[RMDB]
RNA sequence: GGGAACGACUCGAGUAGAGUCGAAAACGUCUAGCCAGAAGCCUGAGCCCCAGAGCAUCCCGGGAGCGCCGCGGGCCGGUGCUCGGCUCGUUGGGCCAUGCAGCGGCGGCCGCCGCGGAGCUGCGAGAGUCGGAUAUCAUUUCGAUGAUAUCCGACUAAAAGAAACAACAACAACAAC
Reactivity to DMS in 0.01 (KOAc 150mM, MgCl2 10mM, bicine 150mM(pH8.5), 24C), signal-to-noise 1, nucleotides 027 to 126: c080g000u000c100u020a130g020c030c030a080g000a100a090g010c050c020u020g010a110g000c030c080c030c030a090g010a110g010c050a170u030c030c000c000g000g030g010a010g000c070g020c010c010g000c010g000g000g030c020c030g000g040u000g010c000u030c060g000g000c000u030c020g000u020u070g030g010g010c020c000a060u030g010c100a070g030c090g010g090c070g000g000c060c050g000c210c050g000c020g010g010a050g010c030u010g000c070g000a110g000
Reactivity to 2A3 in 0.01 (KOAc 150mM, MgCl2 10mM, bicine 150mM(pH8.5), 24C), signal-to-noise 1, nucleotides 027 to 126: c020g060u040c040u050a010g020c000c000a030g060a110a000g040c020c000u040g040a030g050c000c000c000c020a030g010a000g060c010a030u030c000c000c000g050g020g020a020g000c010g000c000c020g000c010g070g010g000c010c000g060g080u010g000c020u010c000g010g000c020u010c000g150u040u230g030g010g020c010c000a070u130g000c050a020g000c020g060g000c000g030g030c070c070g040c020c000g030c010g000g000a010g000c000u030g000c010g020a240g000
Chemical mapping of a 177-nucleotide RNA with DMS and 2A3.
For 2A3 the reverse transcriptase was SuperScript II with manganese.
It was measured as part of the RMDB library RFM100.
For DMS the reverse transcriptase was MarathonRT.